[RMDB]
RNA sequence: GGGAACGACUCGAGUAGAGUCGAAAAGACCUUUUCCAGUCUGGCAGCUACACCGUUAGAAACCUUGCGUUUGGUGAUUAUGGGCAUAACAUUGGCAAUGCCCUUUUCUCAUGCUUGGUUGCUGUCUCGGAUCCUAUCUCUUCGGAGAUAGGAUCCGAAAAGAAACAACAACAACAAC
Reactivity to 2A3 in 0.01 (KOAc 150mM, MgCl2 10mM, bicine 150mM(pH8.5), 24C), signal-to-noise 3, nucleotides 027 to 126: g070a000c000c000u050u040u000u010c000c000a030g020u000c040u060g000g000c030a030g000c000u090a070c050a080c050c060g160u090u060a110g060a020a060a010c000c020u010u020g020c020g070u090u050u070g070g000u040g010a020u020u020a030u080g010g010g040c020a020u020a100a050c100a240u160u300g140g000c070a070a040u000g000c020c000c000u010u000u000u000c000u000c000a010u040g000c020u040u000g030g000u000u070g030c030u020g000u000c000u000